[RMDB]
Source: RMDB library OK2TST, as collected in RNAgym.
The record gives the reactivity of an RNA of 177 nucleotides to 2A3 and DMS.
For DMS the reverse transcriptase was MarathonRT.
2A3 adducts were read by reverse transcription with SuperScript II with manganese.
RNA sequence: GGGAACGACUCGAGUAGAGUCGAAAAUUGCAAAGAGAUUUCGAUACGAUGCAGCCUUAGUUUGUGCCUUAAAGGACAUGGAGGAGGAGAUCCUGGAAGGCAUGAAAGCCAUAAACCUGGAUGACUACUGUUACGUAUGUUUCGACAUACGUAACAGAAAAGAAACAACAACAACAAC
Reactivity to 2A3 in 0.01 (KOAc 150mM, MgCl2 10mM, bicine 150mM(pH8.5), 24C), signal-to-noise 6, nucleotides 027 to 126: u060u030g010c020a030a070a010g090a030g030a090u090u140u130c080g040a030u060a160c030g010a020u040g030c010a020g020c000c000u080u050a080g060u050u060u080g050u040g040c000c010u040u070a070a060a010g010g020a010c020a050u190g100g030a080g010g040a030g030g020a060g020a050u000c000c000u010g010g050a020a000g010g010c010a000u030g060a040a010a010g010c030c010a070u120a060a090a050c020c020u030g040g040a070u060g040a020c020u090a030
Reactivity to DMS in 0.01 (KOAc 150mM, MgCl2 10mM, bicine 150mM(pH8.5), 24C), signal-to-noise 5, nucleotides 027 to 126: u000u000g010c070a020a070a150g010a120g000a120u000u000u010c100g000a140u000a100c070g010a110u010g010c040a070g000c030c030u000u000a090g010u000u000u000g010u000g000c020c020u000u010a100a090a030g010g000a040c100a090u010g000g030a110g020g000a070g000g010a140g010a080u000c010c010u000g000g020a080a050g000g010c010a010u010g000a040a090a140g010c020c030a040u000a030a060a110c090c040u000g000g000a050u000g010a090c070u000a170